[RMDB]
Chemical mapping of a 207-nucleotide RNA with 2A3 and DMS.
For DMS the reverse transcriptase was MarathonRT.
Conditions: 150 mM KOAc, 10 mM MgCl2 and 150 mM bicine (pH 8.5), 24 C.
For DMS, 5,168 sequencing reads were counted.
RNA sequence: GGGAACGACUCGAGUAGAGUCGAAAAGACUGAUGUAGAGUUCGGUUGGAGCGACAAGUAUUUAGCUUGAGAUAGCUAAAUCACCGCGGUAUGAUUAGGGUGAGACCUAGGAACCGUAGGGGUAUUCAAUGCUGUAUUGCGUUCGCGCAAUACAGAAGUACACAAAACUGUUCGCAGUUUUGUGUACAAAAGAAACAACAACAACAAC
Reactivity to 2A3 in 0.01 (KOAc 150mM, MgCl2 10mM, bicine 150mM(pH8.5), 24C), signal-to-noise 6, nucleotides 027 to 156: g050a010c060u050g030a030u100g060u130a030g020a030g060u070u080c040g010g010u030u050g020g020a020g030c040g050a050c040a110a030g050u080a080u010u010u010a000g000c010u020u030g010a020g010a080u110a030g010c000u000a000a010a020u040c020a020c020c020g000c040g010g010u080a090u180g100a150u090u050a020g010g020g010u050g090a080g030a060c000c020u010a020g000g070a040a020c020c010g000u090a170g000g030g000g010u050a110u080u140c100a100a090u210g040c000u000g000u000a000u000u000g010c000g010u010u040c140g000c000g000c090a000a000u000a000c000a000g000a000a010
Reactivity to DMS in 0.01 (KOAc 150mM, MgCl2 10mM, bicine 150mM(pH8.5), 24C), signal-to-noise 2, nucleotides 027 to 156: g020a110c010u010g010a090u000g010u010a070g010a090g010u000u000c020g020g050u010u000g020g010a080g010c020g030a100c070a050a070g000u000a070u010u000u000a000g010c000u000u000g020a290g020a160u010a030g030c010u010a000a020a020u000c040a030c000c000g010c010g040g000u000a070u010g020a250u000u000a030g000g000g010u010g020a300g010a140c010c000u000a010g000g000a080a050c030c010g050u000a070g050g000g000g020u000a090u000u000c110a040a110u010g000c020u000g000u000a000u000u000g010c000g050u000u000c300g060c040g020c000a000a000u000a000c000a010g000a010a090